[RMDB]
RNA sequence: GGGAACGACUCGAGUAGAGUCGAAAAGUUUAUUAGCUCUCCUAGACAACUAAUGCAAGACAAACCAUACCUUGGUGUGACUUCAACCUUUAAAAAGUGGGGUGAAGGCCAGAAAAAUGGUAAAUUCACGUACAGCAGUAGUAGCGGUGAAGCGUCAUAGCGUUCAUGUAUUCGUACAUGAACGCUAAAAAGAAACAACAACAACAAC
Reactivity to 2A3 in 0.01 (KOAc 150mM, MgCl2 10mM, bicine 150mM(pH8.5), 24C), signal-to-noise 2, nucleotides 027 to 156: g010u050u090u070a130u090u100a080g010c000u000c010u000c040c000u050a030g010a060c060a070a020c040u060a040a050u070g020c030a090a050g070a100c040a050a060a020c000c030a010u030a060c020c080u040u060g040g010u060g030u070g070a020c000u000u030c030a010a130c000c000u100u100u170a140a100a040a000a030g130u240g040g020g000g010u020g020a000a000g010g000c000c000a010g050a020a120a010a000a000u040g000g000u030a060a080a070u070u100c110a050c160g050u040a030c070a050g040c000a000g000u060a000g000u050a010g090c040g060g000u060g010a030a000g040c020g050u040c010a040
Reactivity to DMS in 0.01 (KOAc 150mM, MgCl2 10mM, bicine 150mM(pH8.5), 24C), signal-to-noise 1, nucleotides 027 to 156: g050u000u000u000a050u000u000a080g000c010u010c070u010c020c050u000a150g010a230c010a030a020c000u010a010a040u010g010c030a080a100g070a040c090a060a110a130c010c020a130u000a110c040c070u000u030g010g050u000g010u010g030a070c040u000u000c010a010a070c000c000u000u020u000a050a030a100a180a160g030u000g010g030g000g000u000g010a110a050g010g030c020c010a080g000a010a040a070a070a080u000g000g000u000a030a060a090u000u000c040a090c070g000u000a080c030a070g030c000a050g030u000a090g000u040a030g070c070g040g030u000g000a000a110g020c030g000u000c090a140

The record gives the reactivity of an RNA of 207 nucleotides to 2A3 and DMS. Values cover nucleotides 27 to 156. The 2A3 profile rests on 1,164 reads. For 2A3 the reverse transcriptase was SuperScript II with manganese. The RNA was probed in 150 mM KOAc, 10 mM MgCl2 and 150 mM bicine (pH 8.5) at 24 C.